[RMDB]
RNA sequence: GGGAACGACUCGAGUAGAGUCGAAAAAGUUUCCAAUUCGUUGGAAACUACUGUCGGAAUGCGGAAUAUAAAAUCCUCCGCUUAAGGAUUUUACCGACUUAAAGUACACUAGUUUCGACUAGUGUAAAAGAAACUAUAAUUUCGAUUAUAGUUUCUUAAAAGAAACAACAACAACAAC
Reactivity to DMS in 0.01 (KOAc 150mM, MgCl2 10mM, bicine 150mM(pH8.5), 24C), signal-to-noise 2, nucleotides 027 to 126: a270g000u000u000u000c000c000a010a010u000u010c170g020u000u000g000g000a020a000a010c000u010a050c050u000g030u000c010g000g020a170a070u010g020c050g000g010a040a040u000a070u010a080a070a110a090u010c230c060u000c060c070g010c050u000u000a050a060g010g000a140u010u010u010u000a120c000c010g000a010c000u010u010a060a070a090g010u000a010c010a000c000u000a000g000u010u000u020c160g000a020c000u000a010g010u000g000u010a000a040
Reactivity to 2A3 in 0.01 (KOAc 150mM, MgCl2 10mM, bicine 150mM(pH8.5), 24C), signal-to-noise 1, nucleotides 027 to 126: a000g010u010u000u000c000c000a020a020u060u030c120g020u040u010g000g000a000a010a000c020u030a050c000u040g010u020c000g010g060a100a020u120g040c000g010g090a090a000u180a020u040a140a120a030a040u050c000c000u000c050c000g070c020u020u030a070a040g090g000a030u080u000u080u230a010c000c000g010a000c020u030u030a230a100a000g150u030a020c000a000c010u000a010g050u000u090u080c110g060a010c000u010a000g010u000g010u000a000a000
The record gives the reactivity of an RNA of 177 nucleotides to DMS and 2A3. It was measured as part of the RMDB library M2PK50. The reactions ran in a buffer of 150 mM KOAc, 10 mM MgCl2 and 150 mM bicine (pH 8.5), at 24 C.